[RMDB]
RNA sequence: GGGAACGACUCGAGUAGAGUCGAAAAAUCUUUGAUGUAGACAAAGUUAAAACACCUCAUAUUGUACGUCAGCGUUUAACUGAGUACACUAUGAUGGAUCUUGUAUAUGCCCUGAGGCACUUUGAUCAAACACCAGUGUUCGCACUGGUGAAAAGAAACAACAACAACAAC
Reactivity to 2A3 in 0.01 (KOAc 150mM, MgCl2 10mM, bicine 150mM(pH8.5), 24C), signal-to-noise 9, nucleotides 027 to 129: a000u030c020u040u040u070g060a070u100g050u140a050g010a020c010a010a010a010g020u080u110a070a160a040a030c060a040c000c000u000c000a010u010a010u000u010g010u000a020c060g300u000c020a020g020c100g100u100u170u210a050a030c000u000g000a000g000u000a000c000a000c000u010a000u010g010a030u150g020g000a030u020c040u050u090g040u010a050u010a030u180g030c020c030c030u100g060a230g040g010c020a010c050u060u080u060g060a120u060c030a040a020a010
Reactivity to DMS in 0.01 (KOAc 150mM, MgCl2 10mM, bicine 150mM(pH8.5), 24C), signal-to-noise 6, nucleotides 027 to 129: a050u040c050u030u030u040g000a040u030g000u000a050g020a060c040a000a000a000g000u000u000a060a070a120a090c130a090c020c040u030c010a040u030a000u010u030g030u000a000c010g010u000c020a000g000c100g050u060u050u060a090a160c030u050g000a040g020u010a000c020a020c020u000a000u000g040a040u050g010g040a080u000c080u000u000g000u030a040u000a060u040g040c010c010c080u060g040a160g000g000c000a050c050u000u070u050g020a080u050c110a070a050a110
Chemical mapping of a 170-nucleotide RNA with 2A3 and DMS. As a SHAPE reagent, 2A3 marks flexible, mostly unpaired nucleotides at the ribose 2'-OH. 2A3 adducts were read by reverse transcription with SuperScript II with manganese.